[RMDB]
RNA sequence: GGGAACGACUCGAGUAGAGUCGAAAAGACCAGGUGCGACGCGGGGGCUACAGCCCGGCCUCAGCGAGGUCCCCUCGGUAGGUGCCUUCCGCGUCACGGAGCGCCGUGACCGGGGGUAACCCUGGCCACAUGCAGGUGGGUUCGCCCACCUGCAUGUAAAAGAAACAACAACAACAAC
Reactivity to DMS in 0.01 (KOAc 150mM, MgCl2 10mM, bicine 150mM(pH8.5), 24C), signal-to-noise 1, nucleotides 027 to 126: g020a090c000c000a000g000g010u010g050c120g030a100c000g000c010g000g000g040g000g000c060u050a110c180a000g010c030c030c040g000g020c000c000u020c030a050g040c140g000a160g000g000u000c180c010c040c010u020c140g000g030u020a100g030g000u000g000c030c070u030u030c080c030g000c260g040u040c060a040c070g040g000a120g000c140g000c050c000g020u020g020a040c020c030g060g000g020g000g040u010a010a080c090c000c020u000g000g030c050c220
Reactivity to 2A3 in 0.01 (KOAc 150mM, MgCl2 10mM, bicine 150mM(pH8.5), 24C), signal-to-noise 2, nucleotides 027 to 126: g030a000c020c000a020g060g030u070g030c050g030a040c000g000c000g040g000g000g000g000c040u130a090c150a060g090c050c010c050g020g000c000c010u050c050a120g000c100g030a020g030g080u090c040c000c000c000u050c040g000g050u040a050g010g050u030g000c040c000u300u130c030c020g060c040g060u060c010a000c000g000g020a060g100c130g060c030c010g010u050g060a040c010c000g050g000g020g000g000u020a030a030c000c000c000u000g050g010c000c040

An RNA of 177 nucleotides, treated with DMS and 2A3 and read out base by base. Source: RMDB library RFM100, as collected in RNAgym. DMS adducts were read by reverse transcription with MarathonRT.